[RMDB]
RNA sequence: GGGAACGACUCGAGUAGAGUCGAAAAGAUAUGGAUCAGAACUACAGCAAACAAGGCGAUGAAAUCGGAAACGAUGGAGCCUUGCUAGCUGCUGAUCCUAAGUCAAACUUCCAGUUCGCUGGAAGAACAGUUCUACUGAGUUCGCUCAGUAGAACUGAAAAGAAACAACAACAACAAC
Reactivity to DMS in 0.01 (KOAc 150mM, MgCl2 10mM, bicine 150mM(pH8.5), 24C), signal-to-noise 2, nucleotides 027 to 126: g000a040u000a300u000g000g000a020u010c000a030g000a140a040c080u040a300c010a010g030c020a010a130a170c020a010a010g010g000c000g000a070u020g030a060a130a030u010c000g000g000a120a060a210c000g000a010u000g000g000a130g020c000c000u000u000g010c000u000a280g010c020u010g000c000u010g000a010u010c010c010u000a020a090g030u010c020a070a130a140c010u010u000c000c000a000g020u000u000c300g030c020u000g010g010a020a010g000a080a130
Reactivity to 2A3 in 0.01 (KOAc 150mM, MgCl2 10mM, bicine 150mM(pH8.5), 24C), signal-to-noise 2, nucleotides 027 to 126: g030a010u050a020u170g000g010a010u020c020a000g010a050a010c130u270a090c290a020g020c010a000a050a100c000a000a020g010g020c040g300a300u060g050a080a070a020u030c010g030g020a070a020a060c010g000a000u010g020g000a000g040c020c000u000u000g000c010u020a010g000c020u010g000c000u010g000a010u000c000c010u010a090a010g010u000c010a110a060a130c010u000u000c020c000a020g020u060u040c300g040c140u010g000g020a010a010g010a020a050
The record gives the reactivity of an RNA of 177 nucleotides to DMS and 2A3. As a SHAPE reagent, 2A3 marks flexible, mostly unpaired nucleotides at the ribose 2'-OH. The RNA was probed in 150 mM KOAc, 10 mM MgCl2 and 150 mM bicine (pH 8.5) at 24 C. Reactivities are given for positions 27 through 126.